[RMDB]
RNA sequence: GGGAACGACUCGAGUAGAGUCGAAAACGACAGGUGAAGCGGGCCGAGGAUGCAGAAUUAUCUCGUAAACGCUGUCUGCAAAACAAUAAGUGCCAAACAAACGCGCACUGACUUCGCUCUCGCUGCCUAAGCAGUAAGACAGUCCGUCAGCCCGGGACAACUAGCUAUGCUUCGGCAUAGCUAGUUGAAAAGAAACAACAACAACAAC
Reactivity to 2A3 in 0.01 (KOAc 150mM, MgCl2 10mM, bicine 150mM(pH8.5), 24C), signal-to-noise 3, nucleotides 027 to 156: c050g080a020c010a040g000g000u070g080a100a000g020c020g020g040g020c030c020g020a020g020g030a030u080g000c020a000g050a090a050u200u120a140u170c070u020c060g110u230a130a090a070c070g030c040u060g010u030c010u010g040c060a040a040a070a040c080a040a080u160a180a010g000u000g050c000c020a060a230a050c090a070a130a020c120g080c020g000c070a000c000u000g020a020c020u040u050c100g010c050u050c010u020c050g010c010u000g010c010c010u050a110a030g040c030a000g030u050a120a000g030a030c000a030g030u020c030c020g020u030c050a030g000c010c000c000g000g000g020a010
Reactivity to DMS in 0.01 (KOAc 150mM, MgCl2 10mM, bicine 150mM(pH8.5), 24C), signal-to-noise 2, nucleotides 027 to 156: c020g030a120c000a010g030g000u000g010a060a110g010c010g020g010g040c100c010g010a100g040g020a140u010g030c010a130g000a090a110u000u010a120u000c030u000c090g040u000a070a100a150c060g000c030u010g030u000c020u000g000c020a060a080a090a130c050a110a150u000a040a080g030u000g020c020c050a070a120a150c100a070a140a060c160g010c040g000c010a220c040u010g010a080c040u000u000c070g020c060u010c020u020c010g030c000u000g010c000c090u000a100a080g010c030a020g010u000a050a030g020a020c040a070g000u010c010c040g000u000c000a300g030c020c010c000g000g020g020a160